Source: RMDB library OK2TST, as collected in RNAgym. The record gives the reactivity of an RNA of 177 nucleotides to DMS and 2A3. The 2A3 profile rests on 1,907 reads. Values cover nucleotides 27 to 126.
[RMDB]
RNA sequence: GGGAACGACUCGAGUAGAGUCGAAAAACGAUCGUAUGGCGCGAACGCGACACAGAGGAGCUGCCCCUUGCCCACCGUGAGCGAGGUCGUCUCAAUGUCGAAGAUGAGCGGUGCCGUGGACUGGGCCGUCUUAUCCGCAAUUCGUUGCGGAUAAGACAAAAGAAACAACAACAACAAC
Reactivity to DMS in 0.01 (KOAc 150mM, MgCl2 10mM, bicine 150mM(pH8.5), 24C), signal-to-noise 2, nucleotides 027 to 126: a150c110g000a070u010c070g020u010a100u000g020g030c060g030c020g000a070a080c090g020c020g000a060c030a050c110a060g000a110g010g000a090g020c060u000g000c040c010c020c100u000u000g000c000c000c000a120c130c080g010u000g000a110g010c070g000a120g040g020u010c030g040u000c010u010c030a110a130u000g020u010c100g020a080a040g020a030u000g010a090g000c040g020g030u020g000c030c000g020u010g000g010a090c140u000g000g010g010c050c170
Reactivity to 2A3 in 0.01 (KOAc 150mM, MgCl2 10mM, bicine 150mM(pH8.5), 24C), signal-to-noise 2, nucleotides 027 to 126: a000c030g030a040u080c080g020u110a040u180g080g000c030g000c020g100a090a020c060g000c040g060a040c050a020c050a110g090a050g060g020a020g040c030u060g040c060c010c010c000u030u090g040c030c000c000a090c010c010g020u050g050a070g040c020g020a030g000g060u030c000g070u020c000u010c010a090a220u180g090u120c080g060a110a040g000a090u000g000a010g060c000g000g040u130g060c010c010g020u040g000g020a070c070u010g000g000g000c000c020